[RMDB]
This 177-nucleotide RNA was probed chemically with 2A3 and DMS. For DMS the reverse transcriptase was MarathonRT. The 2A3 profile rests on 1,045 reads. Reactivities are rounded to 0.1 and cut off at 0 and 3. Reactivities are given for positions 27 through 126.
RNA sequence: GGGAACGACUCGAGUAGAGUCGAAAAAGCGGGGAAUUUCGGAGAAAAUUCUCCCAAGAUGGGGAAGAGAAGACAAGAAUCGGAAGACUCUCCCCAUGACGCUGGAGACAUCCUGGAAGGGGAAAGACUAUAUAUCCGUCUUCGGACGGAUAUAUAGAAAAGAAACAACAACAACAAC
Reactivity to 2A3 in 0.01 (KOAc 150mM, MgCl2 10mM, bicine 150mM(pH8.5), 24C), signal-to-noise 1, nucleotides 027 to 126: a000g020c040g000g010g000g000a000a070u020u120u060c090g140g060a170g140a120a040a020a000u000u010c000u020c000c000c020a030a050g070a040u050g000g000g000g000a180a000g010a010g010a170a080g010a010c070a050a060g110a260a110u170c130g050g070a010a010g050a030c010u000c010u010c000c040c000c000a000u020g010a000c040g000c060u040g020g000a020g000a040c010a040u060c020c000u000g050g050a050a030g000g040g000g000a030a020a030g030a000
Reactivity to DMS in 0.01 (KOAc 150mM, MgCl2 10mM, bicine 150mM(pH8.5), 24C), signal-to-noise 2, nucleotides 027 to 126: a080g020c110g010g000g020g000a030a010u000u010u010c040g000g050a220g010a140a030a030a040u010u010c030u010c010c040c090a070a030g010a040u000g000g010g000g010a060a050g010a020g000a110a150g000a180c070a150a140g000a140a120u000c140g020g000a110a160g010a090c030u000c010u010c000c000c020c010a020u000g010a140c160g010c020u000g010g000a120g000a050c160a040u000c040c020u000g020g040a110a090g000g000g000g000a100a060a060g020a190